[RMDB]
RNA sequence: GGGAACGACUCGAGUAGAGUCGAAAAAACGAAACUUUGCACGACAGACCUCGGAAAUCUCAACAAGCAAAGUAUGGAUUGAUAGACGGCCCGAUUUCUGUAACUUUACCCAGAAAUAUGGGCGUCUCAGCAGUACAUCUUUCGAGAUGUACUGCUGAAAAGAAACAACAACAACAAC
Reactivity to 2A3 in 0.01 (KOAc 150mM, MgCl2 10mM, bicine 150mM(pH8.5), 24C), signal-to-noise 5, nucleotides 027 to 126: a000a000c130g030a060a010a000c020u020u020u020g000c020a010c020g130a030c020a090g060a030c010c060u060c090g040g060a070a080a120u050c060u000c050a060a180c040a110a030g030c000a020a040a040g030u020a030u060g070g020a020u050u140g030a050u050a110g000a000c020g260g160c000c000c000g010a000u000u000u000c000u000g110u080a060a170c030u130u140u150a050c020c030c000a000g080a020a000a000u180a200u100g000g000g010c000g000u000c000u000
Reactivity to DMS in 0.01 (KOAc 150mM, MgCl2 10mM, bicine 150mM(pH8.5), 24C), signal-to-noise 3, nucleotides 027 to 126: a020a050c070g000a070a080a070c010u000u010u010g020c000a120c110g010a180c300a060g000a060c040c030u000c170g010g020a060a120a070u000c030u010c040a040a070c250a080a090g000c050a000a010a060g000u000a090u030g000g010a130u010u010g010a080u020a020g000a020c010g050g000c000c000c000g020a010u020u000u000c000u000g000u020a120a050c240u040u030u010a150c210c150c020a000g000a020a000a010u000a040u010g020g010g000c000g010u000c000u010